Source information: An RNA of 207 nucleotides, treated with 2A3 and DMS and read out base by base. It was measured as part of the RMDB library M2RFPK. DMS adducts were read by reverse transcription with MarathonRT. The RNA was probed in 150 mM KOAc, 10 mM MgCl2 and 150 mM bicine (pH 8.5) at 24 C. 2A3 adducts were read by reverse transcription with SuperScript II with manganese.

[RMDB]
RNA sequence: GGGAACGACUCGAGUAGAGUCGAAAAAGUGCACUAGGUACGCCUAGUGCACAUUCCAGGACAUACUGCUGAGGAUGUCAAAUAUGCAGUUGGAGUCCUCAACUGGAUAGGCUACGGCCUAUCCAGAAAAAGACUUGGUUGUUCGCAACCAAGUCAAGAGAAUAACCUACUUCGGUAGGUUAUUCUCAAAAGAAACAACAACAACAAC
Reactivity to 2A3 in 0.01 (KOAc 150mM, MgCl2 10mM, bicine 150mM(pH8.5), 24C), signal-to-noise 1, nucleotides 027 to 156: a000g000u000g010c010a010c010u000a010g020g000u040a040c280g110c000c000u000a010g000u000g000c010a000c000a000u010u000c000c000a020g000g000a010c020a040u120a030c030u000g040c020u070g090a070g160g050a210u240g280u300c060a110a040a000u110a040u120g020c010a000g000u020u010g020g060a110g020u020c000c000u060c020a020a090c020u010g000g000a000u000a000g010g000c030u040a030c250g060g000c010c000u000a000u040c010c000a010g000a000a010a000a000a010g010a000c010u000u000g000g010u020u010g010u010u100c200g000c080a010a000c000c030a010a020g000u000c000a000a010
Reactivity to DMS in 0.01 (KOAc 150mM, MgCl2 10mM, bicine 150mM(pH8.5), 24C), signal-to-noise 1, nucleotides 027 to 156: a110g010u000g010c000a030c000u000a020g010g050u000a080c300g060c010c020u000a010g000u000g030c000a000c020a040u000u010c010c000a150g040g000a080c000a070u000a020c030u000g000c050u000g000a090g010g020a080u000g000u000c060a060a040a110u030a140u000g010c050a130g010u000u000g010g010a170g010u010c000c010u000c010a060a170c000u000g000g050a030u000a010g010g030c030u000a120c300g090g030c000c000u000a000u000c020c000a020g000a010a050a050a120a100g000a030c000u000u000g010g010u000u000g000u000u010c260g000c000a030a010c000c000a030a010g000u000c000a000a080